[RMDB]
RNA sequence: GGGAACGACUCGAGUAGAGUCGAAAAAGGGAAGAAAAUAAUUUAGAAAGGUGAUUCCGCCCCAGCUUGCGGUGCGGCCGAAAGGCUGUAAGGCAUCCCGGAGAGGGGAGGCAAGGCGAAAGCCAAAAACGGUACACCAUCUUCGGAUGGUGUACAAGCUUACGUAGAACUUCGGUUCUACGUAAGCAAAAGAAACAACAACAACAAC
Reactivity to 2A3 in 0.01 (KOAc 150mM, MgCl2 10mM, bicine 150mM(pH8.5), 24C), signal-to-noise 1, nucleotides 027 to 156: a000g070g000g040a110a010g060a130a140a010a020u220a080a100u160u160u210a180g050a050a050a010g050g010u060g070a120u030u000c020c010g010c010c000c000c000a010g070c030u060u100g090c060g000g000u020g020c020g030g010c000c000g040a040a010a010g030g000c030u010g060u080a030a030g040g000c010a010u050c000c010c010g020g000a060g010a010g010g000g020g000a000g000g000c070a080a010g000g000c000g040a050a000a010g000c000c000a050a020a000a000a000c040g100g000u000a000c010a000c000c000a000u000c000u000u000c060g080g010a000u010g000g000u010g000u000a000c010a010a010

This 207-nucleotide RNA was probed chemically with 2A3. For 2A3 the reverse transcriptase was SuperScript II with manganese. The RNA was probed in 150 mM KOAc, 10 mM MgCl2 and 150 mM bicine (pH 8.5) at 24 C. The 2A3 profile rests on 957 reads.